Annotation:
Chemical mapping of a 177-nucleotide RNA with DMS and 2A3. It was measured as part of the RMDB library RFMREP.
RNA sequence: GGGAACGACUCGAGUAGAGUCGAAAAUAGCUGAGCCAGUCAGUGGUAAUACUGGUGUAAGCGUGUAGGGCGUGACCUAGGCAAAUCCGGGUCACAUUCAGCCUGAGACGUGAUGCGUAGCCGAUUGCCACUAAAUGGGGUUCGCCCCAUUUAGUGGAAAAGAAACAACAACAACAAC
Reactivity to DMS in 0.01 (KOAc 150mM, MgCl2 10mM, bicine 150mM(pH8.5), 24C), signal-to-noise 2, nucleotides 027 to 126: u000a150g010c020u000g000a160g020c000c000a000g010u000c220a090g000u000g000g010u000a080a050u000a020c030u030g020g010u000g020u010a070a300g000c020g000u000g000u000a280g010g000g000c020g010u000g000a010c020c000u010a070g050g010c180a050a060a100u010c000c000g010g000g000u000c000a000c000a040u000u000c300a170g000c030c010u000g000a260g010a030c010g010u000g000a160u010g000c040g030u000a120g010c030c030g030a070u010u010g010
Reactivity to 2A3 in 0.01 (KOAc 150mM, MgCl2 10mM, bicine 150mM(pH8.5), 24C), signal-to-noise 1, nucleotides 027 to 126: u140a000g020c010u010g000a000g010c000c000a030g010u020c000a030g080u060g180g000u240a110a010u020a180c000u040g010g010u060g020u100a010a060g030c020g000u010g000u030a030g010g000g000c020g030u000g000a010c000c030u070a270g040g000c170a130a080a090u170c000c000g030g000g010u060c000a000c000a000u060u160c050a000g000c000c010u010g020a020g020a000c000g020u040g000a030u210g050c020g110u110a000g020c000c050g050a130u060u180g040